About this RNA: Conditions: 150 mM KOAc, 10 mM MgCl2 and 150 mM bicine (pH 8.5), 24 C. This 207-nucleotide RNA was probed chemically with 2A3.

RNA sequence: GGGAACGACUCGAGUAGAGUCGAAAAGGGGUCACUGGGAGACUCCUCGCUCAGCUAUGAAGUUACUGAAGCCUCCACGGUAAUGGAGCUGGCGAGGAGUCAUCGAUCAGUGACGGAGGCACCCAAACUCUUACCAGCCUUCGGGCUGGUAAGAGAAGUAUACACGUACGUUCGCGUACGUGUAUACAAAAGAAACAACAACAACAAC
Reactivity to 2A3 in 0.01 (KOAc 150mM, MgCl2 10mM, bicine 150mM(pH8.5), 24C), signal-to-noise 4, nucleotides 027 to 156: g020g040g100g040u000c000a010c000u010g000g010g000a020g010a010c010u010c020c030u050c020g000c030u300c050a050g000c060u210a300u300g000a000a000g010u000u000a000c000u030g040a100a020g020c000c000u000c000c000a010c000g000g010u000a010a010u020g010g010a000g000c010u000g010g000c150g000a010g000g010a000g000u000c000a010u080c000g000a000u010c000a000g000u000g000a000c000g000g000a000g000g000c010a040c010c000c010a030a110a140c000u000c000u000u000a000c000c000a000g020c010c010u090u220c300g090g010g000c010u000g000g000u000a000a000g000a000g000a000a000
It was measured as part of the RMDB library RNAMAK.